Chemical mapping of a 177-nucleotide RNA with DMS and 2A3. Values are in units of 0.01, from 0 to 300, in steps of 10. 2A3 adducts were read by reverse transcription with SuperScript II with manganese. Conditions: 150 mM KOAc, 10 mM MgCl2 and 150 mM bicine (pH 8.5), 24 C. For 2A3, 5,964 sequencing reads were counted. The data come from the RNA Mapping Database (RMDB), library M2PK50.
RNA sequence: GGGAACGACUCGAGUAGAGUCGAAAAACCUGAUGAUUCGUCAUCAGGUCACAUGCGGCCCGAACGGCUUCCUGACCGGGCGGAUUCACUUUAAAUGGAGCACUGCUGCAUCAUUCGUGAUGCAGAAGAGCAGUAACGAUUUCGAUCGUUACUGCUCAAAAGAAACAACAACAACAAC
Reactivity to DMS in 0.01 (KOAc 150mM, MgCl2 10mM, bicine 150mM(pH8.5), 24C), signal-to-noise 3, nucleotides 027 to 126: a020c020c000u010g010a020u010g010a010u010u000c190g040u000c000a010u000c000a000g000g020u000c030a020c140a110u010g040c140g010g030c030c000c020g030a090a150c080g000g010c030u010u010c020c020u000g010a170c150c030g000g000g010c020g000g000a120u010u000c060a100c140u010u000u010a040a040a080u000g000g000a080g010c030a140c210u010g000c020u000g000c010a010u000c000a040u000u010c150g030u000g000a020u000g010c000a000g010a040a060
Reactivity to 2A3 in 0.01 (KOAc 150mM, MgCl2 10mM, bicine 150mM(pH8.5), 24C), signal-to-noise 4, nucleotides 027 to 126: a000c000c000u000g000a010u000g000a010u010u100c180g070u010c110a010u000c010a000g000g000u010c010a090c010a030u210g050c060g100g030c000c000c000g010a020a020c040g060g000c010u190u100c010c010u010g030a050c020c010g010g000g000c030g040g060a120u150u110c050a040c170u120u170u210a070a070a070u220g030g000a000g010c010a020c100u120g000c010u000g000c010a010u000c000a000u020u080c140g110u030g000a000u010g000c000a000g000a010a020